RNA sequence: GGGAACGACUCGAGUAGAGUCGAAAAGCAUUAAAACAAUGGAAGCAGGUGAGAGCAGAGAGAUCCCGAGCGCAGGUGAGGUGGGGUCCCUGAGGCGGGCUCAAAAGCUGCUUCCCAAGGCAGGGGGGCCCCUAUGUGCCCUCUGAGAGCACAGCCAGCAUUAAAUGGGUUUCGACCCAUUUAAUGCAAAAGAAACAACAACAACAAC
Reactivity to 2A3 in 0.01 (KOAc 150mM, MgCl2 10mM, bicine 150mM(pH8.5), 24C), signal-to-noise 1, nucleotides 027 to 156: g020c000a030u000u080a090a020a000a020c030a030a040u290g000g030a040a000g010c010a000g040g070u030g070a160g000a030g040c060a020g060a000g000a000g000a120u090c030c020c060g040a030g080c110g010c010a020g020g010u090g050a060g000g100u080g040g010g000g000u010c000c000c070u030g000a050g000g030c020g000g000g040c010u000c010a090a140a030a000g030c000u010g000c000u030u030c000c000c000a010a000g030g000c000a000g000g040g010g020g000g000c050c020c020c000u050a080u120g070u150g000c000c010c000u000c020u020g070a100g000a000g020c020a010c000a080g050c090c060a000
Conditions: 150 mM KOAc, 10 mM MgCl2 and 150 mM bicine (pH 8.5), 24 C. An RNA of 207 nucleotides, treated with 2A3 and read out base by base. Source: RMDB library OK3TST, as collected in RNAgym. For 2A3, 756 sequencing reads were counted.